This 177-nucleotide RNA was probed chemically with DMS and 2A3. In probing experiments dimethyl sulfate is read out at A N1 and C N3, which are open when not base-paired. Conditions: 150 mM KOAc, 10 mM MgCl2 and 150 mM bicine (pH 8.5), 24 C. For 2A3 the reverse transcriptase was SuperScript II with manganese.
RNA sequence: GGGAACGACUCGAGUAGAGUCGAAAAGAUAUGGAGGCAGAACUACACGCUAACAGGAGUCUCGGAAACGAGGCAUAUAUCCUGGACCCGUGCUGCCUCCUAAGUCAAACUCCUGUUCGCAGGAGAAGACAUGAUCUUUGUUCGCAAAGAUCAUGUCAAAAGAAACAACAACAACAAC
Reactivity to DMS in 0.01 (KOAc 150mM, MgCl2 10mM, bicine 150mM(pH8.5), 24C), signal-to-noise 3, nucleotides 027 to 126: g010a050u000a300u000g010g010a020g000g000c010a010g000a080a040c040u030a300c020a020c020g000c010u010a140a270c000a000g030g000a090g010u010c000u000c000g000g000a090a070a180c000g000a000g000g050c000a070u000a120u030a200u000c020c000u010g010g000a060c280c230c000g000u010g010c000u000g010c000c000u000c000c000u000a000a050g000u010c030a120a160a240c010u000c000c000u000g000u010u000c180g020c020a010g000g000a010g050a090a040
Reactivity to 2A3 in 0.01 (KOAc 150mM, MgCl2 10mM, bicine 150mM(pH8.5), 24C), signal-to-noise 2, nucleotides 027 to 126: g000a000u040a060u180g000g000a010g000g020c030a000g000a110a030c100u240a030c300a010c000g000c040u060a180a010c000a010g000g020a020g000u000c000u020c000g000g040a060a070a020c020g000a000g000g030c010a010u090a010u040a000u200c010c000u010g000g000a010c000c000c020g000u010g010c000u000g010c000c010u000c000c000u000a010a000g000u000c010a000a000a110c000u000c000c000u020g040u080u090c300g000c040a000g040g020a010g020a020a020